This 207-nucleotide RNA was probed chemically with 2A3 and DMS.

[RMDB]
RNA sequence: GGGAACGACUCGAGUAGAGUCGAAAAUCAACUAUCUUUCGAGAUAGUUGAGACGCCCCCAUCGUCUAGAGGCCUAGGACACCUCCCUUUCACGGAGGCGACAGGGAUUCGAAUUCCCUUGGGGGUACCACUUGACGCAUACGUUCGCGUAUGCGUCCAGUUGAAGGAAGUUCGCUUCCUUCAACUGAAAAGAAACAACAACAACAAC
Reactivity to 2A3 in 0.01 (KOAc 150mM, MgCl2 10mM, bicine 150mM(pH8.5), 24C), signal-to-noise 6, nucleotides 027 to 156: u010c000a000a000c000u000a000u000c010u020u130u140c260g050a020g000a020u000a000g000u000u000g000a000g010a010c120g010c010c000c000c030c000a000u010c000g020u020c000u020a020g030a130g100g140c080c030u090a000g010g000a000c000a010c010c000u030c000c000c010u120u300u230c140a100c100g000g000a000g000g010c000g000a000c000a000g010g000g000a000u010u000c000g000a000a000u010u000c000c000c010u000u000g010g000g000g000g000u010a020c000c010a060c060u050u080g000a000c000g000c000a000u000a010c000g020u010u070c220g010c000g100u000a000u000g000c000g000u000c000
Reactivity to DMS in 0.01 (KOAc 150mM, MgCl2 10mM, bicine 150mM(pH8.5), 24C), signal-to-noise 3, nucleotides 027 to 156: u010c000a000a010c000u000a000u000c000u000u000u010c250g040a070g020a010u000a000g000u060u010g000a020g000a110c090g010c040c010c000c000c000a060u000c050g010u020c030u000a040g020a120g040g000c170c020u000a060g020g000a140c050a110c000c010u000c000c010c090u000u000u000c210a160c110g020g010a040g010g020c010g000a070c070a060g010g010g010a050u000u010c050g020a300a140u000u000c010c000c010u000u070g000g000g010g010g000u000a020c020c030a070c100u000u010g000a030c000g020c000a010u000a000c010g040u010u000c300g000c030g010u000a010u000g000c000g000u000c000
DMS adducts were read by reverse transcription with MarathonRT. DMS (dimethyl sulfate) methylates the pairing face of unpaired adenines and cytosines. Source: RMDB library ARCHII, as collected in RNAgym.